[RMDB]
RNA sequence: GGGAACGACUCGAGUAGAGUCGAAAACUGUGUUGAAACCUAAUGAAGUUACGUCUCUCGUGAUAGAUGAUGGCGAGAUUCGAGAUGCGGUCUUCUACAUCUCCUUUUUGUCGACCGUAGGAGACGGAAAUUACGAAACCGUAGAGUUUACGAAGAAGUUCUAUAGUGUUUUCGAACACUAUAGAACAAAAGAAACAACAACAACAAC
Reactivity to 2A3 in 0.01 (KOAc 150mM, MgCl2 10mM, bicine 150mM(pH8.5), 24C), signal-to-noise 5, nucleotides 027 to 156: c040u030g010u000g030u090u060g050a080a020a030c020c040u090a150a100u160g040a120a040g050u070u090a030c020g000u000c000u000c030u040c010g030u060g100a150u110a200g140a100u200g020a050u090g060g000c020g010a020g010a040u030u090c050g000a030g010a080u100g070c080g090g110u040c060u070u010c010u060a060c010a070u010c010u080c040c020u120u180u100u040u170g130u120c060g040a080c050c020g000u040a040g010g020a020g000a000c000g000g030a060a080a020u070u060a030c050g020a080a000a000c020c010g040u040a050g050a050g130u050u070u040a050c030g030a030a030g030a140a010
Reactivity to DMS in 0.01 (KOAc 150mM, MgCl2 10mM, bicine 150mM(pH8.5), 24C), signal-to-noise 3, nucleotides 027 to 156: c040u010g020u000g030u000u020g000a070a150a090c060c030u010a110a110u010g010a130a140g000u000u000a080c010g040u000c030u000c000u000c060g020u000g000a090u010a090g030a120u000g000a090u000g020g020c040g000a140g010a130u000u000c060g000a070g010a030u000g010c000g050g030u010c150u010u010c000u000a030c010a040u000c000u000c010c020u000u010u000u000u000g020u000c050g010a090c090c060g020u000a090g020g000a050g010a030c010g020g000a050a060a110u000u000a110c050g000a120a030a050c020c000g000u000a090g010a160g010u000u000u000a120c090g010a080a150g000a110a280
Structure probing data (2A3 and DMS) for a 207-nucleotide construct. For DMS the reverse transcriptase was MarathonRT.